[RMDB]
RNA sequence: GGGAACGACUCGAGUAGAGUCGAAAAAGACUCCGUACGCGGAGUCAAGCUUCCUGUAUCCGUGCUGAGAUUUCGUCUGUCACCAGGCCACCAGCACUGAUGAGACUCCACAGAUACGUGAAGCGAACAAUGUAAUGGCAUUCGUGCCAUUACAUUGAAAAGAAACAACAACAACAAC
Reactivity to DMS in 0.01 (KOAc 150mM, MgCl2 10mM, bicine 150mM(pH8.5), 24C), signal-to-noise 7, nucleotides 027 to 126: a080g000a000c000u000c000c000g040u010a090c240g040c030g020g000a010g010u010c000a020a060g010c030u000u000c000c030u010g010u010a010u000c000c050g030u000g010c210u020g010a020g000a150u000u000u000c030g000u010c010u010g010u010c100a120c140c090a100g000g010c040c040a060c080c070a110g010c110a100c040u000g000a010u010g000a030g000a030c010u000c010c000a000c010a020g000a020u000a000c000g010u000g010a020a020g010c010g010a100a180
Reactivity to 2A3 in 0.01 (KOAc 150mM, MgCl2 10mM, bicine 150mM(pH8.5), 24C), signal-to-noise 9, nucleotides 027 to 126: a000g000a000c000u000c010c000g010u030a030c260g010c010g110g000a000g000u000c000a000a010g000c000u010u000c000c010u020g010u010a010u000c010c020g050u010g040c150u120g040a140g070a300u030u050u060c020g020u000c020u040g090u070c030a070c120c040a110g060g050c030c030a090c020c020a040g030c070a020c030u010g010a010u020g000a000g000a010c010u010c010c000a010c000a010g010a020u020a020c010g050u080g030a010a000g010c010g020a040a020